[RMDB]
This 177-nucleotide RNA was probed chemically with DMS and 2A3. The RNA was probed in 150 mM KOAc, 10 mM MgCl2 and 150 mM bicine (pH 8.5) at 24 C. 2A3 adducts were read by reverse transcription with SuperScript II with manganese. Values cover nucleotides 27 to 126. DMS adducts were read by reverse transcription with MarathonRT. Source: RMDB library OK2TRN, as collected in RNAgym.

RNA sequence: GGGAACGACUCGAGUAGAGUCGAAAAGUGAAAGUUUGUCAGAAUUACUCUUUCGAAGCAUACAGUCUCAUUUUAAAAGCUAUUGCAUAACAUUAAAUCCUAAAAAGAGUUAUGCCUCUGAAUCAGAAUCGGUAAACAAUUUCGAUUGUUUACCGAUAAAAGAAACAACAACAACAAC
Reactivity to DMS in 0.01 (KOAc 150mM, MgCl2 10mM, bicine 150mM(pH8.5), 24C), signal-to-noise 4, nucleotides 027 to 126: g030u010g000a040a180a200g010u000u010u000g000u010c020a300g010a060a060u010u010a100c170u010c160u010u010u000c020g000a100a090g000c010a020u000a030c040a060g010u010c130u000c030a050u000u000u010u000a010a090a140a120g020c150u000a030u000u010g000c020a020u010a010a020c010a070u000u000a050a070a140u010c020c010u010a030a040a080a050a050g000a110g020u000u000a010u000g000c010c260u000c090u010g020a060a080u010c090a120g000a180
Reactivity to 2A3 in 0.01 (KOAc 150mM, MgCl2 10mM, bicine 150mM(pH8.5), 24C), signal-to-noise 2, nucleotides 027 to 126: g020u030g020a100a060a000g020u030u070u070g120u150c020a020g060a040a060u070u070a150c050u000c010u050u070u000c030g020a030a000g000c000a010u040a060c010a040g130u000c030u010c050a050u010u110u080u140a070a190a020a000g010c040u090a080u090u090g000c020a010u020a020a010c000a020u010u070a040a100a090u050c020c000u090a090a090a040a000a030g080a010g000u010u010a010u020g000c000c030u050c020u080g150a140a140u130c010a040g140a130